[RMDB]
RNA sequence: GGGAACGACUCGAGUAGAGUCGAAAAGUUAGGCGAGGCUCCUAUACAAACACAGGUUGCUGAUCUGACGACGUCGAGAGACGCCCAAGAUUAGGACAGGAUAUAUCGAACCAAGGUUUAUCCCCAUAAAACUCGGAACACUUCGGUGUUCCGAGAACUUCUCAUUGAUGUUCGCAUCAAUGAGAAGAAAAGAAACAACAACAACAAC
Reactivity to 2A3 in 0.01 (KOAc 150mM, MgCl2 10mM, bicine 150mM(pH8.5), 24C), signal-to-noise 4, nucleotides 027 to 156: g030u030u040a030g040g000c080g050a100g040g030c050u030c020c010u060a070u080a190c120a030a180a010c100a010c030a070g060g050u140u150g050c010u010g010a040u000c010u040g010a020c010g000a000c000g010u010c000g000a020g010a000g000a110c010g020c010c000c000a020a010g050a060u070u110a020g030g020a020c050a050g020g030a010u040a010u010a000u070c030g030a040a060c060c030a100a050g020g000u010u030u040a030u050c010c010c000c000a030u180a070a130a040a050c000u010c000g000g010a000a000c000a010c010u060u110c240g070g000u000g000u000u000c000c000g000a000g000a000a000
Reactivity to DMS in 0.01 (KOAc 150mM, MgCl2 10mM, bicine 150mM(pH8.5), 24C), signal-to-noise 2, nucleotides 027 to 156: g030u000u000a010g000g000c020g000a210g030g030c030u000c010c020u000a070u040a150c040a110a100a150c080a070c080a100g010g040u000u000g020c000u000g010a040u000c000u000g000a220c030g000a010c010g000u000c020g010a300g000a300g050a020c000g010c000c020c040a200a070g000a050u000u000a060g000g000a140c040a050g000g000a100u000a040u000a020u000c000g010a070a230c080c030a050a170g000g020u000u000u000a090u000c000c030c010c040a090u000a020a110a090a160c010u000c000g020g000a020a010c010a010c000u000u000c300g080g050u000g010u000u010c000c000g000a000g000a000a050